Annotation:
An RNA of 177 nucleotides, treated with DMS and 2A3 and read out base by base. Conditions: 150 mM KOAc, 10 mM MgCl2 and 150 mM bicine (pH 8.5), 24 C. DMS (dimethyl sulfate) methylates the pairing face of unpaired adenines and cytosines. Source: RMDB library OK2TRN, as collected in RNAgym.
[RMDB]
RNA sequence: GGGAACGACUCGAGUAGAGUCGAAAAUUGCCGUGGGCAUCGGGGAGCAUCUCACGCCAGGAUGACCCGACGCUCCCCGUGACCUUGGCGUGGGUGAUAGCUGCCUCGGCACAGUCCUCGCACCGAGCUUAGGUAUCGGAUUCGUCCGAUACCUAAGAAAAGAAACAACAACAACAAC
Reactivity to DMS in 0.01 (KOAc 150mM, MgCl2 10mM, bicine 150mM(pH8.5), 24C), signal-to-noise 4, nucleotides 027 to 126: u000u000g030c020c030g020u010g010g020g010c030a070u000c050g010g000g000g000a070g030c010a100u000c010u000c060a040c060g010c040c010a060g010g020a090u010g010a110c070c070c080g000a090c100g000c020u000c000c010c010c060g010u000g010a090c010c000u000u010g010g020c010g020u000g000g000g020u000g010a100u000a110g020c110u010g010c040c020u000c060g020g000c110a070c150a150g000u000c020c000u000c150g000c060a110c030c020g000a090g010
Reactivity to 2A3 in 0.01 (KOAc 150mM, MgCl2 10mM, bicine 150mM(pH8.5), 24C), signal-to-noise 3, nucleotides 027 to 126: u120u070g010c030c020g020u090g000g010g000c030a040u090c050g000g000g010g010a010g030c010a050u030c010u010c030a010c030g050c020c000a020g020g070a080u120g100a110c030c040c070g030a040c090g000c030u000c060c020c000c010g020u020g010a050c010c000u010u070g010g010c030g000u030g000g040g020u120g070a150u090a120g020c050u150g140c010c000u010c010g020g000c050a020c000a080g010u020c000c010u000c020g000c000a020c010c030g000a030g050